[RMDB]
RNA sequence: GGGAACGACUCGAGUAGAGUCGAAAAGAAUGUCUGACGUACGAUGGCCUUAGGUAUCAGCUGAUGGCGUGACCCUUGUGUGGUUCACGUUACGUGAGACGUUAAAAGGCUAAGUGGUACUACGAAACCCUAUCCGAUAUUUCGAUAUCGGAUAGGGAAAAGAAACAACAACAACAAC
Reactivity to 2A3 in 0.01 (KOAc 150mM, MgCl2 10mM, bicine 150mM(pH8.5), 24C), signal-to-noise 7, nucleotides 027 to 126: g070a040a080u150g030u070c030u040g050a010c030g010u020a000c030g070a110u100g020g000c010c010u040u060a050g090g020u060a040u080c020a030g100c050u140g030a250u080g090g010c000g010u000g020a000c020c010c000u160u150g200u050g060u170g130g020u090u100c000a000c000g010u020u020a010c000g010u020g020a020g010a000c020g000u000u030a060a270a000a010g000g000c010u030a100a050g300u080g180g020u070a030c020u010a010c030g060a060a030a030
Reactivity to DMS in 0.01 (KOAc 150mM, MgCl2 10mM, bicine 150mM(pH8.5), 24C), signal-to-noise 6, nucleotides 027 to 126: g010a110a080u010g020u000c020u010g000a180c200g000u000a020c040g010a170u000g010g000c000c000u000u000a110g020g010u010a050u000c030a090g010c070u010g010a150u010g010g000c000g010u000g000a020c050c000c010u000u020g030u000g020u010g020g000u010u010c010a010c000g010u000u000a010c020g010u000g000a050g010a030c020g010u010u000a050a080a050a040g010g010c000u000a040a110g020u010g010g010u000a030c030u000a190c210g000a070a120a130